[RMDB]
RNA sequence: GGGAACGACUCGAGUAGAGUCGAAAAGCACCGCCGCAGUGCAGCCAACCUCCAACCGCACACACGCUGCCCGAGCCUGCUCCUGUCGCAGUCCUACCCGGUCCGGGGCCGGACCCGGGUAGGCGUAGACUAUACUCCCAUUCGUGGGAGUAUAGUCAAAAGAAACAACAACAACAAC
Reactivity to 2A3 in 0.01 (KOAc 150mM, MgCl2 10mM, bicine 150mM(pH8.5), 24C), signal-to-noise 5, nucleotides 027 to 126: g010c010a010c030c040g060c020c030g030c070a030g030u040g050c020a010g060c040c030a040a090c020c010u040c020c020a070a070c030c010g030c020a010c000a010c000a000c090g020c030u030g030c000c010c010g040a030g040c000c020u030g010c010u020c000c020u050g030u050c030g020c110a040g060u090c000c000u000a010c000c000c000g000g000u000c010c010g050g020g260g080c190c010g030g010a030c070c110c010g020g000g000u000a000g000g000c000g000u020a010
Reactivity to DMS in 0.01 (KOAc 150mM, MgCl2 10mM, bicine 150mM(pH8.5), 24C), signal-to-noise 8, nucleotides 027 to 126: g010c040a090c020c050g010c060c050g010c070a100g020u000g010c040a110g010c050c050a070a130c070c020u000c020c030a090a100c080c040g010c040a060c070a080c090a070c070g010c040u000g000c040c020c020g000a090g010c020c020u010g000c030u010c010c010u010g010u010c070g010c100a090g010u010c000c000u000a010c000c000c000g010g010u000c000c000g010g000g020g020c170c020g000g000a020c060c030c030g020g000g010u000a000g000g000c070g020u010a070